[RMDB]
Source information:
Chemical mapping of a 177-nucleotide RNA with DMS and 2A3. Values cover nucleotides 27 to 126. The RNA was probed in 150 mM KOAc, 10 mM MgCl2 and 150 mM bicine (pH 8.5) at 24 C. Reactivities are rounded to 0.1 and cut off at 0 and 3. For 2A3 the reverse transcriptase was SuperScript II with manganese.
RNA sequence: GGGAACGACUCGAGUAGAGUCGAAAAGGGCGAAUGAACGCGAUAACGGCAGGCUUAGCAGAUGGACCAGUCGGCGAGUUGUAAACCGUCAAUGGCGCCUGGGAAUAGUCGGACAGAGACGCGAUUGCCUUAGGAACCAGUUCGCUGGUUCCUAAGGAAAAGAAACAACAACAACAAC
Reactivity to DMS in 0.01 (KOAc 150mM, MgCl2 10mM, bicine 150mM(pH8.5), 24C), signal-to-noise 3, nucleotides 027 to 126: g000g020g020c020g000a120a070u010g020a100a070c120g010c030g000a060u010a110a150c100g030g020c020a090g010g000c030u000u020a140g010c020a070g010a030u010g010g030a150c040c030a060g000u020c060g010g000c010g000a100g010u000u000g020u000a070a090a060c060c020g020u000c030a140a060u010g010g030c040g010c060c020u020g000g000g000a070a090u000a080g000u000c040g010g010a120c080a080g010a100g020a110c050g010c080g000a090u010u000g000
Reactivity to 2A3 in 0.01 (KOAc 150mM, MgCl2 10mM, bicine 150mM(pH8.5), 24C), signal-to-noise 2, nucleotides 027 to 126: g010g040g010c050g040a060a090u170g060a180a020c010g010c040g050a030u040a140a000c040g060g010c080a020g030g050c020u010u020a020g010c030a020g050a140u060g040g030a050c030c000a050g040u050c040g050g020c010g000a060g050u010u040g130u140a120a140a050c000c000g020u030c000a060a180u050g020g030c020g020c000c010u020g000g000g040a040a040u100a060g040u020c000g010g030a030c020a000g050a020g020a060c020g050c030g060a080u050u170g070
Source information: For DMS the reverse transcriptase was MarathonRT. It was measured as part of the RMDB library OK2TRN.